This 177-nucleotide RNA was probed chemically with DMS and 2A3.
RNA sequence: GGGAACGACUCGAGUAGAGUCGAAAAGAAAGAUUCGGAUUCGCCAUCAUACGUCCAACCGUGCAUUUGAUAUGCAUAUAUAUGCAUCGCGAGCCACGGUUGGCUGUAUGAUGGCGAUACCGAUUAAUGAAUUCGUUUCAUUCGUGAAACGAAUUCAAAAAGAAACAACAACAACAAC
Reactivity to DMS in 0.01 (KOAc 150mM, MgCl2 10mM, bicine 150mM(pH8.5), 24C), signal-to-noise 4, nucleotides 027 to 126: g000a100a130a070g010a080u010u000c000g010g020a300u000u000c000g020c000c000a000u000c000a000u000a000c000g000u000c010c010a000a010c010c000g010u010g000c160a120u030u010u010g000a040u010a020u000g020c000a010u000a180u030a150u050a030u000g020c010a000u000c060g000c050g000a050g000c300c000a010c000g000g000u000u000g000g030c010u010g000u010a000u000g000a010u000g000g010c000g000a000u000a030c010c000g000a010u000u020a050a100
Reactivity to 2A3 in 0.01 (KOAc 150mM, MgCl2 10mM, bicine 150mM(pH8.5), 24C), signal-to-noise 2, nucleotides 027 to 126: g110a020a060a000g120a030u090u070c010g000g020a060u020u020c000g010c000c000a000u000c010a000u010a000c000g050u010c010c000a000a000c000c000g000u000g000c040a130u020u010u100g020a020u020a000u030g000c050a000u060a030u060a000u070a000u090g000c000a000u000c040g000c010g040a000g050c080c030a000c000g000g000u000u000g000g000c000u010g000u000a000u000g000a010u000g000g020c000g000a000u000a000c000c000g010a000u010u030a020a080